[RMDB]
RNA sequence: GGGAACGACUCGAGUAGAGUCGAAAACAUAUGGAAAACUGAGAUAACAAUAGUAUUCCUUUCUAUUGUUGCUUUUAGAAGCAGAUAAUUUAAAAACAGCGAGUACAACAUUUAAGUAGUAACUGCAUAUUUGUAGAUGUUCAAUCAAUAUUAGCUAGUAAUCACCUAUGUUCGCAUAGGUGAUUACAAAAGAAACAACAACAACAAC
Reactivity to DMS in 0.01 (KOAc 150mM, MgCl2 10mM, bicine 150mM(pH8.5), 24C), signal-to-noise 2, nucleotides 027 to 156: c030a150u020a120u080g000g000a070a080a150a160c070u000g010a140g030a170u010a080a090c060a080a120u030a050g010u000a090u010u010c050c040u000u000u000c040u040a050u010u010g020u030u000g020c080u000u010u030u000a140g020a080a060g030c020a150g010a090u010a050a100u000u000u000a030a060a090a120a040c010a060g010c040g010a170g020u010a090c030a070a120c060a120u000u000u000a080a180g010u010a090g000u000a140a080c020u010g010c020a120u000a120u000u000u010g010u000a070g010a070u010g000u000u000c090a050a070u010c070a040a120u010a110u010u000a140g010c010u000a090
Reactivity to 2A3 in 0.01 (KOAc 150mM, MgCl2 10mM, bicine 150mM(pH8.5), 24C), signal-to-noise 4, nucleotides 027 to 156: c030a020u140a120u140g040g040a050a050a030a000c040u050g030a070g050a200u140a120a000c010a010a000u000a010g020u020a110u080u160c010c000u050u090u030c000u000a010u000u000g030u020u020g040c030u060u120u070u040a070g030a140a010g040c030a010g040a100u100a080a090u240u150u160a040a140a020a010a020c010a000g020c010g030a010g040u040a010c030a090a010c010a110u100u160u150a100a030g020u060a000g030u020a070a030c020u060g030c020a020u030a170u110u110u120g060u090a040g010a110u070g010u090u070c020a060a030u050c010a030a060u120a140u170u140a040g070c010u040a020
An RNA of 207 nucleotides, treated with DMS and 2A3 and read out base by base. Conditions: 150 mM KOAc, 10 mM MgCl2 and 150 mM bicine (pH 8.5), 24 C. The data come from the RNA Mapping Database (RMDB), library OK3TST. For 2A3, 1,733 sequencing reads were counted. The DMS profile rests on 2,151 reads. Reactivities are given for positions 27 through 156. For DMS the reverse transcriptase was MarathonRT.